The data come from the RNA Mapping Database (RMDB), library VIROID.
Structure probing data (DMS and 2A3) for a 177-nucleotide construct.

RNA sequence: GGGAACGACUCGAGUAGAGUCGAAAACCCCUCUAUUGAAAAGAAAGGCAAGGAGACUCACCUGUCGUCGUCGACGAAGGCAUGUGAGCCCAACUCGAUGAAGAGCGUCAGCGGACGGCCUCUGAGAGCAUACUACAUAGUUCGCUAUGUAGUAUGCAAAAGAAACAACAACAACAAC
Reactivity to DMS in 0.01 (KOAc 150mM, MgCl2 10mM, bicine 150mM(pH8.5), 24C), signal-to-noise 5, nucleotides 027 to 126: c050c000c010c080u010c040u000a100u000u010g000a090a040a120a110g000a090a110a050g010g030c040a060a300g010g000a110g020a130c000u000c000a030c010c040u000g010u000c010g020u000c010g030u000c190g010a120c030g020a060a020g000g000c000a010u010g000u000g020a030g020c050c000c010a050a230c080u000c020g010a140u000g000a090a110g020a040g000c030g010u000c010a100g020c180g000g010a030c030g000g000c010c010u000c070u000g010a090g010a200
Reactivity to 2A3 in 0.01 (KOAc 150mM, MgCl2 10mM, bicine 150mM(pH8.5), 24C), signal-to-noise 6, nucleotides 027 to 126: c010c000c020c020u010c030u080a250u070u200g050a080a060a060a070g090a100a130a010g030g000c040a020a070g040g030a110g030a270c000u000c020a010c000c020u010g010u010c020g000u000c010g070u080c100g090a260c030g010a040a000g000g000c000a010u060g020u030g030a020g000c010c000c000a010a010c000u010c020g170a200u230g120a090a130g010a010g000c030g020u020c030a110g220c120g300g020a010c020g020g010c040c000u000c020u060g100a100g010a010

For 2A3, 6,507 sequencing reads were counted.